RNA sequence: GGGAACGACUCGAGUAGAGUCGAAAAAUGUAUUCCAUAACAUUGAGGAUGCAGUGGGACUUAGGGGUGAAGCACUUUGGGAACUGUAUUUGUGUUUGCAUGGAUGAGCUUGAGCCAAUAGAACCCGCCGUUCACUUUUUUUCGAAAAAGUGAACGGAAAAGAAACAACAACAACAAC
Reactivity to 2A3 in 0.01 (KOAc 150mM, MgCl2 10mM, bicine 150mM(pH8.5), 24C), signal-to-noise 2, nucleotides 027 to 126: a030u120g030u070a070u050u050c030c030a050u190a160a040c060a120u120u150g080a020g120g000a030u030g060c020a020g080u060g040g010g020a100c060u070u110a060g080g000g000g000u040g060a040a000g040c030a040c090u030u060u070g020g000g030a040a050c020u030g080u060a180u070u150u080g140u000g040u030u090u090g040c020a040u040g060g050a080u070g040a000g030c000u040u030g030a030g010c030c000a020a030u030a040g030a060a040c000c000c010g000
Reactivity to DMS in 0.01 (KOAc 150mM, MgCl2 10mM, bicine 150mM(pH8.5), 24C), signal-to-noise 3, nucleotides 027 to 126: a060u010g010u010a060u000u000c080c020a090u020a080a070c120a060u020u030g030a080g000g000a030u000g010c030a050g000u000g000g000g010a260c070u010u010a110g030g020g010g030u030g010a070a100g000c070a060c050u010u020u020g000g000g020a080a060c030u000g020u000a040u010u000u000g010u000g000u000u020u010g030c100a030u010g010g010a080u010g000a100g010c030u000u000g000a180g020c030c060a030a070u010a090g000a060a100c010c000c000g010
This 177-nucleotide RNA was probed chemically with 2A3 and DMS.
For DMS the reverse transcriptase was MarathonRT.
2A3 adducts were read by reverse transcription with SuperScript II with manganese.
For DMS, 4,062 sequencing reads were counted.